The record gives the reactivity of an RNA of 177 nucleotides to 2A3 and DMS. The reactions ran in a buffer of 150 mM KOAc, 10 mM MgCl2 and 150 mM bicine (pH 8.5), at 24 C. It was measured as part of the RMDB library OK1LIB. The 2A3 profile rests on 1,147 reads. For 2A3 the reverse transcriptase was SuperScript II with manganese. Values cover nucleotides 27 to 126. For DMS the reverse transcriptase was MarathonRT. For DMS, 1,279 sequencing reads were counted.
RNA sequence: GGGAACGACUCGAGUAGAGUCGAAAAGAGAGAAAUACCGCGCGCAAUCAGAGAAAGGACUGUAAGGACGCGAAAUCCUUUCCGUCACUUACCGCAAGAAAGAGCGAUGUGUGACGAAUAGAGAGAGCGUGCUCAGUGAGUUCGCUCACUGAGCACGAAAAGAAACAACAACAACAAC
Reactivity to 2A3 in 0.01 (KOAc 150mM, MgCl2 10mM, bicine 150mM(pH8.5), 24C), signal-to-noise 2, nucleotides 027 to 126: g090a000g000a000g040a000a140a000u280a120c030c020g050c020g000c020g000c000a000a150u060c000a020g000a000g050a080a020a000g010g060a030c000u010g010u180a080a050g050g010a000c000g000c010g030a020a000a010u020c000c000u010u000u000c030c020g000u010c000a010c090u040u050a160c000c060g060c040a070a030g110a200a090a000g110a030g000c010g000a020u070g040u010g000u000g000a000c000g020a050a020u170a070g100a000g010a000g000a030g040
Reactivity to DMS in 0.01 (KOAc 150mM, MgCl2 10mM, bicine 150mM(pH8.5), 24C), signal-to-noise 1, nucleotides 027 to 126: g000a070g000a180g010a130a130a030u030a050c070c020g000c040g040c010g070c030a200a030u000c060a050g000a070g000a010a000a110g000g000a000c050u060g000u000a040a100g000g000a050c030g040c030g060a050a130a160u000c000c000u000u000u000c080c000g040u000c000a000c000u000u000a000c030c090g010c010a030a110g010a010a150a110g000a120g010c000g000a050u060g030u000g040u000g000a040c020g000a050a160u010a000g000a100g010a060g010a240g040